[RMDB]
RNA sequence: GGGAACGACUCGAGUAGAGUCGAAAAGCUAUGCCGGGGCCACUGUGAACCCUGCCGCCUGCCGGAACACUCUUCGCUCCGGACCAGCUCAGCCUCUGAUAAGCUGGACUCGGCACGCCCGCAACAACUUUCUGAAUUCGUUCGCGAAUUCAGAAAGAAAAGAAACAACAACAACAAC
Reactivity to DMS in 0.01 (KOAc 150mM, MgCl2 10mM, bicine 150mM(pH8.5), 24C), signal-to-noise 2, nucleotides 027 to 126: g000c210u020a170u000g040c010c000g050g030g000g020c050c110a040c080u000g020u010g000a090a280c050c040c000u000g020c020c040g000c010c030u010g010c050c020g000g020a050a050c060a090c200u020c060u060u000c080g000c080u000c000c000g040g030a100c050c030a040g000c070u010c050a030g000c030c010u010c050u000g030a070u030a090a080g000c130u000g000g000a170c030u020c020g000g020c000a040c190g000c030c000c010g000c170a130a130c120a080a050
Reactivity to 2A3 in 0.01 (KOAc 150mM, MgCl2 10mM, bicine 150mM(pH8.5), 24C), signal-to-noise 5, nucleotides 027 to 126: g020c050u080a010u160g010c000c000g010g000g030g000c010c020a050c050u030g040u050g050a060a070c030c000c010u030g020c010c010g030c000c010u040g030c020c010g030g030a040a010c040a040c060u090c070u160u120c070g000c020u010c000c000g020g020a030c030c020a010g010c010u010c020a030g030c020c020u090c040u070g100a110u040a190a000g020c040u010g010g010a050c020u010c010g010g000c010a010c020g030c000c000c010g020c010a010a150c010a010a020